[RMDB]
Structure probing data (2A3 and DMS) for a 177-nucleotide construct.
The DMS profile rests on 2,579 reads.
Source: RMDB library OK2TRN, as collected in RNAgym.
Reactivities are given for positions 27 through 126.
The RNA was probed in 150 mM KOAc, 10 mM MgCl2 and 150 mM bicine (pH 8.5) at 24 C.
Reactivities are rounded to 0.1 and cut off at 0 and 3.
For 2A3, 3,120 sequencing reads were counted.

RNA sequence: GGGAACGACUCGAGUAGAGUCGAAAACUGCAGAUCAUCCCGUCGCUGCGCGGGGUGAGCGAUGCCAUCAACAAGGAGUCGCGCAACCUGACGCUCACUCCCAAGGUCCAGGUCGACGCAACCGCCGAUCGCAAAUGCAAUUCGUUGCAUUUGCGAUAAAAGAAACAACAACAACAAC
Reactivity to 2A3 in 0.01 (KOAc 150mM, MgCl2 10mM, bicine 150mM(pH8.5), 24C), signal-to-noise 2, nucleotides 027 to 126: c020u040g000c000a020g010a170u060c000a030u030c010c050c030g000u040c080g090c270u210g000c040g000c000g020g020g000g010u000g000a010g000c050g010a020u100g020c020c040a210u110c060a060a140c000a080a130g020g010a020g050u060c010g050c010g000c020a040a040c000c010u040g020a030c030g000c130u020c020a040c030u070c000c000c000a030a030g020g010u020c050c020a000g000g020u020c020g020a060c010g000c020a020a050c000c060g120c020c020g030
Reactivity to DMS in 0.01 (KOAc 150mM, MgCl2 10mM, bicine 150mM(pH8.5), 24C), signal-to-noise 3, nucleotides 027 to 126: c090u000g020c040a110g000a170u000c010a040u000c000c000c000g000u000c060g030c150u010g020c130g010c030g000g000g020g030u000g000a030g010c040g000a040u000g000c040c100a050u000c090a070a070c120a090a100g010g000a190g020u010c060g010c040g000c060a070a060c030c010u020g020a070c140g010c000u010c060a070c060u000c010c010c030a140a150g010g000u010c050c060a050g000g000u000c030g020a080c040g000c080a100a040c070c030g020c050c040g010